[RMDB]
RNA sequence: GGGAACGACUCGAGUAGAGUCGAAAAUCUCAAAGCUUCGGCUUUGAGACAGUAAGGGAAACCGAUUAUUCCGGUCGACUGCGGAGAAACAAAGUCAAAUAAGAACGUUAGGCUUCGGCCUAACGAACCUGUUUCAGAUAUUCGUAUCUGAAACAGGAAAAGAAACAACAACAACAAC
Reactivity to DMS in 0.01 (KOAc 150mM, MgCl2 10mM, bicine 150mM(pH8.5), 24C), signal-to-noise 4, nucleotides 027 to 126: u000c000u000c000a010a000a020g020c000u000u020c240g040g020c000u000u000u000g000a010g010a020c120a050g020u000a090a060g010g000g010a110a080a160c040c010g010a130u000u030a120u000u000c060c010g000g000u000c070g000a100c020u000g000c180g010g000a060g000a070a090a110c080a040a120a040g000u000c030a100a100a090u000a120a090g040a130a140c010g020u000u000a000g000g010c010u000u000c230g020g000c000c000u000a000a000c000g000a030a050
Reactivity to 2A3 in 0.01 (KOAc 150mM, MgCl2 10mM, bicine 150mM(pH8.5), 24C), signal-to-noise 5, nucleotides 027 to 126: u010c000u000c000a000a010a010g020c010u070u170c240g100g000c000u020u010u000g000a000g000a000c000a020g100u090a060a140g020g040g050a050a030a040c020c010g010a010u080u050a190u300u000c050c020g030g060u060c080g040a030c010u030g030c040g030g070a080g210a140a100a010c050a100a030a000g050u060c020a020a070a070u200a070a070g070a120a030c000g000u000u000a010g000g000c000u020u040c230g070g000c000c000u000a000a000c000g000a000a010
An RNA of 177 nucleotides, treated with DMS and 2A3 and read out base by base. The RNA was probed in 150 mM KOAc, 10 mM MgCl2 and 150 mM bicine (pH 8.5) at 24 C. 2A3 adducts were read by reverse transcription with SuperScript II with manganese. It was measured as part of the RMDB library M2PK50.